[RMDB]
RNA sequence: GGGAACGACUCGAGUAGAGUCGAAAAGGAAUAAUGUCUGCUGGAACAAAGCUGAGCAGCUUCGGGAUCAACCAAUCAAAUUAUUCCAGCCAUUAUAAUGGUGAUGGUUUUCCUACAGAAGUUUGCAAUCAUUUAACGCAUUCGUGCGUUAAAUGAUAAAAGAAACAACAACAACAAC
Reactivity to DMS in 0.01 (KOAc 150mM, MgCl2 10mM, bicine 150mM(pH8.5), 24C), signal-to-noise 4, nucleotides 027 to 126: g030g010a050a010u010a010a030u010g000u010c080u000g010c100u000g010g000a140a130c060a090a090a080g010c040u000g020a140g020c090a060g020c020u010u000c080g010g020g010a110u010c120a090a070c200c150a050a090u000c090a040a060a030u000u000a010u000u000c010c010a180g000c010c000a020u000u010a040u000a110a140u000g020g030u000g010a030u000g010g000u000u000u000u000c000c000u010a060c140a120g010a040a040g020u010u000u000g010c100a120
Reactivity to 2A3 in 0.01 (KOAc 150mM, MgCl2 10mM, bicine 150mM(pH8.5), 24C), signal-to-noise 3, nucleotides 027 to 126: g000g000a020a010u040a000a040u070g090u100c050u070g010c000u040g090g010a110a070c070a100a100a020g060c080u090g030a000g050c020a010g020c000u030u060c050g070g020g030a080u110c050a020a100c030c020a020a060u100c060a070a120a060u050u000a010u000u010c000c000a000g000c010c010a010u070u110a060u070a210a240u180g160g030u070g040a030u010g000g020u000u000u050u040c000c000u010a030c020a050g150a150a010g020u240u300u180g060c020a020